This 207-nucleotide RNA was probed chemically with 2A3. The 2A3 profile rests on 514 reads. For 2A3 the reverse transcriptase was SuperScript II with manganese. Conditions: 150 mM KOAc, 10 mM MgCl2 and 150 mM bicine (pH 8.5), 24 C. Reactivities are given for positions 27 through 156.
[RMDB]
RNA sequence: GGGAACGACUCGAGUAGAGUCGAAAAUGUCUUUAGAUCUCAGGAGUGUUAACAUAAAACAACUUUAAAAAUGCAACAUAUAGGUAUAACCCACUUCAAUUAACUUCAGCAUUACAGUAAUGAGUGAUUACAAAGAUGAUUGAGGGGGCAAAACGUAGUCGAGCAUUACUUUCGAGUAAUGCUCGACAAAAGAAACAACAACAACAAC
Reactivity to 2A3 in 0.01 (KOAc 150mM, MgCl2 10mM, bicine 150mM(pH8.5), 24C), signal-to-noise 1, nucleotides 027 to 156: u050g010u040c010u060u100u000a040g050a070u050c040u060c050a020g000g060a040g000u030g060u050u100a050a050c010a020u270a170a200a000a030c040a000a070c090u210u270u160a060a140a000a000a000u080g010c010a020a070c040a100u100a010u090a050g000g000u040a110u050a110a010c000c000c010a280c060u080u010c050a050a090u030u070a010a010c020u100u170c040a020g070c010a040u010u140a020c040a190g090u070a000a010u020g050a050g120u040g020a010u000u060a000c050a020a150a000g040a060u090g000a040u020u010g010a030g000g030g010g090g000c010a030a030a020a020c040g010u060a050